[RMDB]
RNA sequence: GGGAACGACUCGAGUAGAGUCGAAAAUGAAACUAAGGAAUAACUUAUGCCAUAUGGAUAUUGCCCUUAUUGUGGCGGAGAAGGUGUAACUGCUGCCCGUAAUCCAGUUGGACCAACGUAUUGUGAACGCAACAGGAUAGUUCGCUAUCCUGUUGCGAAAAGAAACAACAACAACAAC
Reactivity to DMS in 0.01 (KOAc 150mM, MgCl2 10mM, bicine 150mM(pH8.5), 24C), signal-to-noise 2, nucleotides 027 to 126: u010g000a160a110a070c070u040a080a040g010g020a140a150u000a120a040c070u000u000a050u010g000c040c030a020u020a130u010g000g000a070u000a050u000u010g000c060c050c010u000u010a130u030u030g110u000g080g010c060g010g010a110g000a070a030g010g010u000g000u000a120a040c060u000g000c090u010g000c030c030c070g020u000a130a070u000c020c030a050g010u030u020g000g000a190c050c070a070a100c100g000u000a050u000u000g020u000g000a060a150